[RMDB]
RNA sequence: GGGAACGACUCGAGUAGAGUCGAAAAGCGCAUGCCGAGGGGGUAGCUUUCCUCGUAAAUCCAGCUGCAAAACUCUAGUUGCCAACGACGACAACUACGCUCUGGCCGCUUAAGGCCUAAGCCUCGAAACCGCUUGUGUCCAUGCUCGCGGUGUAGACUUACGUCGGUGGUUCGCCACCGACGUAAGAAAAGAAACAACAACAACAAC
Reactivity to 2A3 in 0.01 (KOAc 150mM, MgCl2 10mM, bicine 150mM(pH8.5), 24C), signal-to-noise 1, nucleotides 027 to 156: g070c080g050c140a020u130g040c100c020g010a010g000g000g000g000g000u010a010g010c010u000u070u300c000c000u020c000g050u150a000a000a000u000c000c000a000g050c000u020g000c000a000a060a220a180c180u170c060u030a010g010u070u010g040c060c070a090a090c230g210a000c040g000a010c020a000a010c050u100a010c060g040c040u130c070u040g010g010c020c010g000c100u300u230a140a130g020g000c010c010u090a090a080g000c020c000u070c050g080a090a050a000c010c000g070c010u010u010g010u000g020u030c030c070a140u260g000c000u010c000g020c000g080g000u000g000u000a040g000a000
The data come from the RNA Mapping Database (RMDB), library ARCHII. The record gives the reactivity of an RNA of 207 nucleotides to 2A3. Values cover nucleotides 27 to 156. The reactions ran in a buffer of 150 mM KOAc, 10 mM MgCl2 and 150 mM bicine (pH 8.5), at 24 C.